This 207-nucleotide RNA was probed chemically with DMS and 2A3.
RNA sequence: GGGAACGACUCGAGUAGAGUCGAAAACGGAUUCGACAGGCAUUGUCGCGCAUGAACUGCAACUGCUGAGGGAUCAGGAUAAUCAUCCGCAGAUAAAUAUAACUGCUAAAAAUAAUACACAAACUUACGCAAUGGCAGCCUAAACAGCACCAUGCGUCUAUUACAAUUAGUUCGCUAAUUGUAAUAGAAAAGAAACAACAACAACAAC
Reactivity to DMS in 0.01 (KOAc 150mM, MgCl2 10mM, bicine 150mM(pH8.5), 24C), signal-to-noise 2, nucleotides 027 to 156: c040g010g010a080u020u000c000g040a090c020a060g010g020c040a070u000u000g000u010c050g010c080g000c040a090u010g010a110a120c080u010g020c060a100a180c030u000g020c060u000g000a140g040g030g030a130u000c030a130g030g030a130u000a030a060u000c020a100u000c020c020g020c030a050g030a170u010a020a100a130u020a120u010a100a150c030u010g020c010u000a000a080a020a030a080u000a050a080u000a070c020a080c120a080a030a130c160u000u000a030c020g000c030a090a090u000g040g030c000a170g020c030c010u000a080a080a070c140a080g010c020a060c010c000a020u010g000c000g000u000
Reactivity to 2A3 in 0.01 (KOAc 150mM, MgCl2 10mM, bicine 150mM(pH8.5), 24C), signal-to-noise 9, nucleotides 027 to 156: c040g050g040a110u130u120c020g020a010c020a040g060g180c080a110u090u110g020u030c030g020c020g010c080a080u160g070a120a070c040u060g010c030a050a040c060u090g000c000u000g010a010g010g010g000a010u010c010a000g020g030a260u030a040a020u030c020a010u010c010c010g000c010a000g020a050u140a140a240a020u190a040u070a140a080c010u010g010c020u090a040a050a050a020a040u160a060a070u160a090c080a010c040a100a200a020c040u160u130a010c010g000c040a070a130u010g020g000c020a020g000c010c000u050a070a060a010c010a010g000c000a000c000c000a000u010g000c000g000u000

The data come from the RNA Mapping Database (RMDB), library RSTRND.